[RMDB]
RNA sequence: GGGAACGACUCGAGUAGAGUCGAAAAGAUAUGGACGAUAGGGAGCCUUAACCUCGGAAACGAGGUCCAGGCGACGAUCUAUGUCCUAAGUCAAAGUUAUGAUACGGGUUCGCCCGUAUCAUAACAACAUUGAGGGAAUCUUCGGAUUCCCUCAAUGAAAAGAAACAACAACAACAAC
Reactivity to 2A3 in 0.01 (KOAc 150mM, MgCl2 10mM, bicine 150mM(pH8.5), 24C), signal-to-noise 2, nucleotides 027 to 126: g030a000u070a050u110g010g010a020c140g060a070u010a010g020g000g010a010g000c010c010u020u030a010a010c010c000u000c010g010g030a080a050a020c000g010a000g000g020u000c010c040a010g000g020c010g010a030c020g000a000u000c000u010a010u030g000u000c010c010u020a180a020g040u040c070a190a080a020g000u010u000a010u010g000a010u000a000c010g040g000g050u050u130c280g110c040c000c000g010u000a000u000c000a000u010a010a000c000a000a000
Reactivity to DMS in 0.01 (KOAc 150mM, MgCl2 10mM, bicine 150mM(pH8.5), 24C), signal-to-noise 5, nucleotides 027 to 126: g010a030u000a300u010g010g010a010c000g020a050u010a010g000g000g000a070g010c000c000u000u000a100a010c010c000u000c000g010g010a090a070a220c000g030a010g010g010u000c040c300a020g010g010c000g020a070c250g000a030u010c000u000a010u000g000u010c000c000u010a030a090g010u000c040a070a090a140g010u000u000a000u000g000a020u000a000c000g000g000g020u000u010c280g010c000c000c000g000u000a000u000c000a000u000a000a000c000a090a140

Chemical mapping of a 177-nucleotide RNA with 2A3 and DMS. It was measured as part of the RMDB library TTRDEL. Conditions: 150 mM KOAc, 10 mM MgCl2 and 150 mM bicine (pH 8.5), 24 C. 2A3 adducts were read by reverse transcription with SuperScript II with manganese.